This 207-nucleotide RNA was probed chemically with 2A3.
The data come from the RNA Mapping Database (RMDB), library OK3TST.
2A3 adducts were read by reverse transcription with SuperScript II with manganese.
Reactivities are given for positions 27 through 156.

RNA sequence: GGGAACGACUCGAGUAGAGUCGAAAAACUUCAGAACUACAGUUUGAAAAUCACUAAUUUCCUCCAAAUCCCUCAUUUUUCAGGUGAGGAACUGAAGUCCAGAGGGGUUUCUUGAACUGCCCAAGGACACACUACUAUUUAGUGAUACAAGCUGGGACAGUAAUAGGGACUUCGGUCCCUAUUACUGAAAAGAAACAACAACAACAAC
Reactivity to 2A3 in 0.01 (KOAc 150mM, MgCl2 10mM, bicine 150mM(pH8.5), 24C), signal-to-noise 1, nucleotides 027 to 156: a000c020u190u150c030a060g090a210a040c080u210a150c040a020g020u050u000u000g100a110a050a010a000u000c000a010c010u000a010a000u050u050u050c000c050u040c050c030a000a170a230u080c050c010c000u030c030a020u030u020u130u230u200c040a020g030g010u040g010a000g000g000a020a000c040u150g010a070a010g010u050c070c020a020g020a100g120g030g040g080u080u020u030c080u020u220g090a100a100c030u230g030c050c000c000a030a060g010g000a000c000a000c020a010c090u300a120c010u000a020u070u080u000a000g000u000g000a000u050a120c000a000a000g000c010u020g020g020g000a000